[RMDB]
RNA sequence: GGGAACGACUCGAGUAGAGUCGAAAAUGUUUGCAAUUCGUUGCAAACAAACUACCGAGAACGUUGCUCGGUAUAAACAGCGAACCCUUGGAAACAAGGGUACUAUGGAACGCUUCGGCGUUCCAAACCUACUGGACAGAUUCGUCUGUCCAGUAGGAAAAGAAACAACAACAACAAC
Reactivity to 2A3 in 0.01 (KOAc 150mM, MgCl2 10mM, bicine 150mM(pH8.5), 24C), signal-to-noise 2, nucleotides 027 to 126: u030g000u000u000u020g020c020a010a030u070u080c180g060u050u000g000c000a020a000a000c010a010a030a000c030u020a020c000c010g000a000g000a100a090c110g100u090u150g020c010u000c000g000g000u030a010u040a010a040a010c030a010g090c080g050a070a030c010c000c000u020u000g030g010a050a010a010c000a000a020g000g000g000u000a000c000u010a010u030g000g000a000a000c000g000c000u030u070c210g070g000c000g000u000u020c010c000a010a000a000
Reactivity to DMS in 0.01 (KOAc 150mM, MgCl2 10mM, bicine 150mM(pH8.5), 24C), signal-to-noise 3, nucleotides 027 to 126: u010g010u000u000u000g000c000a000a010u000u010c260g040u000u010g000c000a000a010a010c010a040a080a150c130u000a150c010c000g010a000g010a090a160c200g030u010u000g010c010u000c010g000g000u000a010u000a020a100a110c080a070g000c110g000a170a060c000c000c000u010u000g000g000a170a120a220c010a000a010g000g000g000u000a000c060u000a200u000g010g000a000a000c010g030c000u000u000c170g010g010c000g010u000u000c000c000a000a030a070